[RMDB]
RNA sequence: GGGAACGACUCGAGUAGAGUCGAAAAAGAUAUGGAGGAUCUUGUCAGCUCCGGAGAAGGAGAGGGCUUCGGAAACGAAGCCUACCCACCUCCGUAACGGAGCUUGGAUUUAGAUCCUCCUAAGUCACAACAUGCUUGAGUUCGCUCAAGCAUGUUGAAAAGAAACAACAACAACAAC
Reactivity to DMS in 0.01 (KOAc 150mM, MgCl2 10mM, bicine 150mM(pH8.5), 24C), signal-to-noise 2, nucleotides 027 to 126: a090g020a040u010a300u000g000g030a030g010g010a000u020c030u000u010g000u000c010a050g000c000u000c000c000g030g000a090g000a160a260g000g000a010g020a120g030g010g000c000u000u000c000g000g000a190a120a270c000g000a000a000g000c000c000u010a010c070c050c200a300c140c000u030c010c000g010u010a080a300c030g010g010a000g020c000u000u000g010g010a040u000u000u000a000g000a020u000c010c010u000c000c000u000a010a050g010u000c020a300